[RMDB]
RNA sequence: GGGAACGACUCGAGUAGAGUCGAAAAUAUCCUGUGAGGUUACUCUCAUGGGCUCUGUCCAAGUGGCGUAUGGGAGCGUAGUGCUUUAUGGCGCAGUGACGUACAAUCCCUUUCCACAACAUUGAAGGCAGUCAUGAAUUUUCGAAUUCAUGACUGCAAAAGAAACAACAACAACAAC
Reactivity to 2A3 in 0.01 (KOAc 150mM, MgCl2 10mM, bicine 150mM(pH8.5), 24C), signal-to-noise 5, nucleotides 027 to 126: u130a030u150c000c000u000g010u000g000a020g080g040u220u110a080c060u050c000u000c090a000u010g020g010g000c000u000c000u020g060u010c020c000a110a040g010u000g010g010c050g070u130a080u070g010g000g000a020g010c020g000u020a030g000u030g030c030u120u230u120a190u300g030g000c000g000c020a040g080u050g150a050c010g000u090a050c030a060a100u060c000c000c030u020u050u000c020c000a030c000a060a040c060a090u080u220g080a060a040g110
Reactivity to DMS in 0.01 (KOAc 150mM, MgCl2 10mM, bicine 150mM(pH8.5), 24C), signal-to-noise 3, nucleotides 027 to 126: u000a020u040c000c000u000g050u020g010a010g000g010u020u050a090c250u030c000u000c000a040u000g000g030g000c050u020c020u000g040u010c020c030a030a210g030u000g000g000c300g060u050a030u020g000g000g040a040g010c130g020u000a120g000u020g020c000u020u030u020a110u030g000g000c030g030c010a100g000u010g000a100c150g010u040a060c070a060a280u020c020c000c010u000u030u000c020c010a030c010a120a130c240a140u010u000g010a150a080g000
Structure probing data (2A3 and DMS) for a 177-nucleotide construct. The RNA was probed in 150 mM KOAc, 10 mM MgCl2 and 150 mM bicine (pH 8.5) at 24 C.